[RMDB]
An RNA of 177 nucleotides, treated with 2A3 and DMS and read out base by base.

RNA sequence: GGGAACGACUCGAGUAGAGUCGAAAACACACACCUUGCCUGCAGGUGUUCUUCAAGGCCGGGCUGCUGGGGCUGCUGGAGGAAAUGAGGGACGAGAGGCUGAGCCGCAUCAUCACGCGUAUCCAGGCGCGUGAGACGAAUUCGUUCGUCUCACGCGAAAAGAAACAACAACAACAAC
Reactivity to 2A3 in 0.01 (KOAc 150mM, MgCl2 10mM, bicine 150mM(pH8.5), 24C), signal-to-noise 1, nucleotides 027 to 126: c060a010c010a010c000a020c000c030u010u090g050c020c010u050g010c020a000g000g000u000g010u080u030c030u150u110c040a100a110g050g020c010c040g000g060g000c040u050g050c040u060g020g000g000g000c030u040g000c000u030g050g020a040g070g030a010a090a070u120g010a060g030g040g010a010c010g020a030g000a010g100g000c060u080g000a010g050c000c020g070c020a040u050c000a030u030c020a010c060g020c010g010u000a030u040c040c030a060g070g000
Reactivity to DMS in 0.01 (KOAc 150mM, MgCl2 10mM, bicine 150mM(pH8.5), 24C), signal-to-noise 2, nucleotides 027 to 126: c070a130c180a070c030a020c010c010u010u000g020c020c020u010g020c160a070g020g020u020g000u000u000c040u000u000c100a080a130g030g010c070c040g000g000g000c040u000g010c050u000g030g000g000g020c080u030g000c070u000g010g010a090g000g000a030a030a070u020g000a100g020g000g000a060c060g000a100g000a080g000g010c040u000g010a090g020c040c020g030c060a050u000c060a070u010c040a070c050g030c040g010u000a160u030c100c040a080g010g000
The 2A3 profile rests on 1,614 reads. DMS adducts were read by reverse transcription with MarathonRT.